[RMDB]
RNA sequence: GGGAACGACUCGAGUAGAGUCGAAAAAGGCUUCCCAACAGGUUAGCUAGCCUAGGAUCCACCCGGUAUUUCGCAGGAAGGGGGGGGGGGCGUUGAGAUAGCUAGAGGAGGGGAAGCCUUCCUGGAGCUAGAUUCGAAAAUUCGUUUUCGAAUCUAGAAAAGAAACAACAACAACAAC
Reactivity to DMS in 0.01 (KOAc 150mM, MgCl2 10mM, bicine 150mM(pH8.5), 24C), signal-to-noise 5, nucleotides 027 to 126: a040g000g000c030u000u000c000c000c020a110a140c150a140g010g000u010u000a020g000c010u000a070g010c030c020u000a100g000g000a120u030c030c020a080c020c010c040g000g010u040a100u020u010u000c060g010c170a090g020g000a080a030g000g000g000g000g000g000g000g000g000g000g000c050g020u020u000g000a080g000a080u010a030g010c060u010a040g010a090g010g000a180g000g010g010g000a050a060g000c010c010u000u000c010c000u000g010g000a130g010
Reactivity to 2A3 in 0.01 (KOAc 150mM, MgCl2 10mM, bicine 150mM(pH8.5), 24C), signal-to-noise 6, nucleotides 027 to 126: a000g030g010c020u010u010c000c010c000a010a070c030a020g080g050u070u030a000g010c010u010a010g000c010c020u050a080g100g070a100u030c010c010a050c030c030c000g010g010u140a190u060u140u090c110g040c070a030g050g080a080a040g010g010g000g000g000g000g000g000g000g000g000c050g050u060u100g030a060g020a080u060a020g020c020u020a010g000a020g120g020a040g000g020g000g020a010a020g000c000c000u000u010c000c000u000g030g000a010g020